[RMDB]
RNA sequence: GGGAACGACUCGAGUAGAGUCGAAAAAGGAGCUGUACUCCUUGGGUUCUUGGGAGCAGCAGGAAGCACUAUGGGCGCAGCGUCAUUGACGCUGACGGUACAGGCCAGACUAUUAUUGUCUGGUAUAGAAGUCAACAAUGUUCGCAUUGUUGACUUCAAAAGAAACAACAACAACAAC
Reactivity to 2A3 in 0.01 (KOAc 150mM, MgCl2 10mM, bicine 150mM(pH8.5), 24C), signal-to-noise 2, nucleotides 027 to 126: a000g120g040a060g000c090u050g000u060a050c000u000c010c010u010u030g050g000g000u100u040c000u010u060g020g000g000a060g050c050a000g030c020a000g020g050a070a020g080c070a000c060u080a120u130g020g090g000c070g000c030a000g000c030g000u010c090a300u020u300g010a000c000g000c000u000g020a020c020g000g030u050a010c050a050g100g050c010c020a010g000a000c000u020a050u300u030a050u160u180g000u000c000u000g000g010u020a010u010a010
Reactivity to DMS in 0.01 (KOAc 150mM, MgCl2 10mM, bicine 150mM(pH8.5), 24C), signal-to-noise 2, nucleotides 027 to 126: a000g010g000a100g040c030u000g000u000a300c070u000c000c000u000u010g010g030g040u000u020c060u010u010g000g030g000a060g000c070a050g010c050a070g020g000a070a030g010c050a060c100u010a100u000g010g000g060c050g000c000a010g000c000g010u000c020a190u000u030g020a040c000g030c020u010g000a020c050g020g000u010a040c170a070g020g010c000c000a000g010a000c000u000a140u010u010a080u030u000g000u000c000u020g000g020u000a020u020a030